An RNA of 207 nucleotides, treated with DMS and 2A3 and read out base by base. Values cover nucleotides 27 to 156. DMS adducts were read by reverse transcription with MarathonRT. Conditions: 150 mM KOAc, 10 mM MgCl2 and 150 mM bicine (pH 8.5), 24 C.

[RMDB]
RNA sequence: GGGAACGACUCGAGUAGAGUCGAAAACAACUACUCACAGCCAUUGUGACAACUAGUAUAAGAAUGAUUUGAUGAAGGCGAGGAGAAUGUCAUAAUAAUCAUCCAUAAUAAAUUUUUGAGUCAGUACACAGGAAGAACAGAAACCAUCUACACCUAAUCACUUUUAGACCUUCGGGUCUAAAAGUGAAAAAGAAACAACAACAACAAC
Reactivity to DMS in 0.01 (KOAc 150mM, MgCl2 10mM, bicine 150mM(pH8.5), 24C), signal-to-noise 1, nucleotides 027 to 156: c130a090a160c000u000a090c020u020c000a080c040a040g030c010c110a140u000u000g060u000g020a100c130a140a130c130u010a030g030u000a050u000a060a210g000a120a040u010g000a040u000u000u000g020a090u010g040a060a140g000g020c030g000a140g000g000a090g000a030a050u000g010u000c020a000u010a010a090u080a030a180u000c040a040u000c050c030a100u000a060a140u010a070a050a200u000u000u000u010u000g010a130g020u000c020a000g040u000a090c030a050c060a120g010g000a130a050g010a040a060c030a160g020a030a050a060c060c070a090u000c030u000a050c060a060c070c010u010a110a250
Reactivity to 2A3 in 0.01 (KOAc 150mM, MgCl2 10mM, bicine 150mM(pH8.5), 24C), signal-to-noise 3, nucleotides 027 to 156: c020a030a040c020u050a000c000u010c020a060c000a030g060c090c030a140u120u100g010u060g040a050c020a010a040c040u060a020g110u060a110u050a160a030g120a070a050u090g020a050u070u080u140g050a080u060g000a040a030g060g000c030g020a040g010g050a050g040a070a090u040g030u030c060a040u010a200a040u060a050a030u110c010a030u000c020c040a020u060a150a030u140a100a250a110u110u120u060u100u120g040a040g030u020c040a010g020u040a050c050a000c000a070g000g080a060a050g020a070a000c050a060g090a080a040a000c030c000a010u080c020u130a040c020a050c120c020u080a030a060